This 177-nucleotide RNA was probed chemically with DMS and 2A3. It was measured as part of the RMDB library OK1LIB. The DMS profile rests on 681 reads. The RNA was probed in 150 mM KOAc, 10 mM MgCl2 and 150 mM bicine (pH 8.5) at 24 C.
RNA sequence: GGGAACGACUCGAGUAGAGUCGAAAAAGUGCAACAGCGAAUAACGUGGUUGUCACGAAUACACCAAAUGUACUUACUGAAACAACUGCAGAAUUAGGAUUUACAUUAAUGCUUGCUAUAGCACGCCCUCGCCUGUGUCAUUCGUGACACAGGCGAGAAAAGAAACAACAACAACAAC
Reactivity to DMS in 0.01 (KOAc 150mM, MgCl2 10mM, bicine 150mM(pH8.5), 24C), signal-to-noise 1, nucleotides 027 to 126: a030g030u000g140c300a010a200c230a020g000c000g020a260a000u020a070a230c080g040u000g070g000u000u000g110u050c000a190c090g030a140a120u000a000c260a170c120c300a000a050a050u000g000u000a000c120u000u050a170c020u000g000a190a070a190c120a030a000c030u000g000c090a120g080a030a000u000u000a090g000g000a000u050u000u000a170c030a020u000u000a000a030u000g000c300u000u000g000c000u000a090u000a220g000c000a000c000g000c050c000
Reactivity to 2A3 in 0.01 (KOAc 150mM, MgCl2 10mM, bicine 150mM(pH8.5), 24C), signal-to-noise 3, nucleotides 027 to 126: a010g010u000g010c000a030a000c010a020g030c020g080a140a110u170a200a090c060g000u030g030g060u010u080g030u070c020a000c030g060a020a040u130a050c060a030c000c040a030a060a060u080g000u000a010c000u050u060a050c000u100g060a100a020a020c050a050a030c090u170g050c070a020g040a240a080u090u070a080g040g000a000u010u060u120a050c060a070u040u250a130a070u110g080c120u110u020g020c040u050a030u050a180g000c000a000c000g060c000c000